Chemical mapping of a 177-nucleotide RNA with DMS and 2A3.
The DMS profile rests on 2,399 reads.
2A3 adducts were read by reverse transcription with SuperScript II with manganese.
Values cover nucleotides 27 to 126.
[RMDB]
RNA sequence: GGGAACGACUCGAGUAGAGUCGAAAAGAUAUGGAGUAAACGGCUAGUUGUGUUCGGAAACGAACAUACAACUUGGACCCGUCUACUCCUAAGUCAAAAGUUGGCACUAGUUCGCUAGUGCCAACAACGAGGAUAAGUUGUUCGCAACUUAUCCUCGAAAAGAAACAACAACAACAAC
Reactivity to DMS in 0.01 (KOAc 150mM, MgCl2 10mM, bicine 150mM(pH8.5), 24C), signal-to-noise 3, nucleotides 027 to 126: g000a030u000a300u020g010g010a010g010u000a000a020a000c000g000g000c090u010a060g010u010u000g030u010g000u010u000c010g030g000a040a050a160c000g020a000a010c000a200u000a100c070a020a000c010u000u020g060g020a170c300c030c000g000u010c030u000a010c010u010c000c000u000a000a090g000u010c020a070a100a170a140g010u000u000g000g010c010a010c010u000a010g000u000u010c280g000c010u000a000g000u000g000c000c000a010a000c010a020a070
Reactivity to 2A3 in 0.01 (KOAc 150mM, MgCl2 10mM, bicine 150mM(pH8.5), 24C), signal-to-noise 2, nucleotides 027 to 126: g000a000u040a020u080g010g000a020g010u010a030a000a000c000g040g110c250u230a060g010u010u000g020u000g000u000u020c000g010g050a030a050a030c020g010a000a000c020a010u280a030c060a020a010c020u110u210g240g160a050c050c000c020g000u010c010u020a000c010u000c000c000u000a060a020g030u060c020a020a040a110a170g010u020u000g040g020c000a000c020u000a010g050u100u090c300g090c160u010a020g000u000g030c000c010a000a000c000a000a000
Conditions: 150 mM KOAc, 10 mM MgCl2 and 150 mM bicine (pH 8.5), 24 C.